[RMDB]
RNA sequence: GGGAACGACUCGAGUAGAGUCGAAAAGAUAUGGACCAUACACAGCAUCGAUCUACCGGGUCGGAAACGACCCGUAGGGAGCUGGUAUGGUCCUAAGUCAAAACGCUCAAUGUUCGCAUUGAGCGAACACUUCGAUGAACUUCGGUUCAUCGAAGUGAAAAGAAACAACAACAACAAC
Reactivity to DMS in 0.01 (KOAc 150mM, MgCl2 10mM, bicine 150mM(pH8.5), 24C), signal-to-noise 2, nucleotides 027 to 126: g010a010u000a020u010g020g000a000c000c000a000u000a000c040a080c020a000g030c000a300u010c280g000a000u000c000u000a000c040c160g020g020g010u000c000g020g000a000a010a020c000g010a000c000c040c000g040u000a000g000g010g010a010g040c000u010g010g030u000a010u000g000g010u000c000c000u000a000a090g000u000c000a100a060a090a190c040g000c000u020c000a010a030u000g000u000u000c250g060c000a030u000u000g000a040g000c000g000a020a080
Reactivity to 2A3 in 0.01 (KOAc 150mM, MgCl2 10mM, bicine 150mM(pH8.5), 24C), signal-to-noise 1, nucleotides 027 to 126: g000a000u020a000u040g000g010a010c020c000a020u070a010c300a000c000a300g060c000a030u300c100g010a000u000c010u020a010c060c180g010g000g000u000c020g000g010a000a000a000c010g000a060c050c000c000g000u000a010g000g020g040a010g010c020u010g020g000u000a010u020g000g000u010c000c000u010a000a010g000u020c000a000a030a080a010c030g040c000u000c000a000a000u010g020u100u130c300g000c160a010u000u020g000a010g000c000g010a030a000